[RMDB]
Chemical mapping of a 207-nucleotide RNA with 2A3 and DMS. For 2A3, 1,642 sequencing reads were counted. DMS (dimethyl sulfate) methylates the pairing face of unpaired adenines and cytosines.
RNA sequence: GGGAACGACUCGAGUAGAGUCGAAAACUGCGUUGGCAUCCCUAGAGACAGAGCACGGUGCAUUUCCCUGAAUAACCACUGCUAUUUUUAGAGGGCAGAAAUGAACGGCACCCCAGGAGAGAAGGCGAGAAGAGUGACUGGAUGCUUCUAGAGAUGACUACCAAAAUCAGUUCGCUGAUUUUGGUAGAAAAGAAACAACAACAACAAC
Reactivity to 2A3 in 0.01 (KOAc 150mM, MgCl2 10mM, bicine 150mM(pH8.5), 24C), signal-to-noise 3, nucleotides 027 to 156: c040u080g020c030g060u060u100g010g000c030a050u040c040c010c000u030a030g030a000g030a060c030a010g080a000g060c030a010c040g030g000u030g020c040a040u020u020u050c010c010c020u040g060a090a060u050a100a010c020c040a070c020u020g010c030u070a220u100u140u010u050u150a120g000a100g040g030g000c030a000g020a020a110a030u160g020a060a010c050g030g000c040a020c000c020c050c020a040g030g020a050g000a010g010a090a010g030g010c030g020a040g030a080a040g050a010g040u070g020a020c010u000g040g030a070u090g000c000u030u010c010u030a030g000a000g040a020u070g000a020
Reactivity to DMS in 0.01 (KOAc 150mM, MgCl2 10mM, bicine 150mM(pH8.5), 24C), signal-to-noise 1, nucleotides 027 to 156: c000u000g000c040g070u010u010g050g000c000a080u010c000c010c000u000a060g010a130g010a050c040a010g010a070g030c020a060c000g020g000u000g000c030a120u000u000u000c020c030c000u000g000a120a090u010a030a080c050c020a160c030u010g040c020u000a050u000u000u000u020u060a150g000a110g040g000g000c090a050g010a080a070a080u000g030a140a060c050g020g000c010a050c030c030c020c040a090g040g000a080g020a120g020a080a030g020g010c060g010a050g020a090a110g030a090g000u010g010a100c000u010g060g000a130u010g100c040u000u000c010u000a090g010a070g000a120u000g010a230